[RMDB]
RNA sequence: GGGAACGACUCGAGUAGAGUCGAAAAUUUGGCCCUGAGAAGCCUCAAGACCUGCGGACAGCCAUUAAAAAAGCCUUUGAAGAGAGCUCUAUGGCCUCAGCAACAUCAAGUACACCACCUUCUGAAGACAUUGCUGAAGAGAGUGGAACGAAUGAGCCCUUCGAUUAUCUUUCGAGAUAAUCGAAGGAAAAGAAACAACAACAACAAC
Reactivity to 2A3 in 0.01 (KOAc 150mM, MgCl2 10mM, bicine 150mM(pH8.5), 24C), signal-to-noise 1, nucleotides 027 to 156: u010u030u150g060g000c030c000c000u000g100a120g030a060a000g000c030c010u080c020a110a090g040a050c030c040u000g000c030g000g040a030c010a010g000c020c010a050u070u160a140a190a050a090a000a000g040c030c030u050u050u170g100a140a080g050a010g030a020g140c010u000c030u180a050u070g040g000c000c030u060c000a040g000c010a020a020c000a040u060c060a010a070g000u030a040c000a030c000c010a100c040c000u000u030c030u080g060a040a020g080a010c070a150u130u300g060c060u030g000a040a040g070a010g000a020g030u010g000g000a040a000c000g030a030a020u030g030a050g000c020
This 207-nucleotide RNA was probed chemically with 2A3. For 2A3, 587 sequencing reads were counted. 2A3 adducts were read by reverse transcription with SuperScript II with manganese. The RNA was probed in 150 mM KOAc, 10 mM MgCl2 and 150 mM bicine (pH 8.5) at 24 C. The data come from the RNA Mapping Database (RMDB), library OK3TST.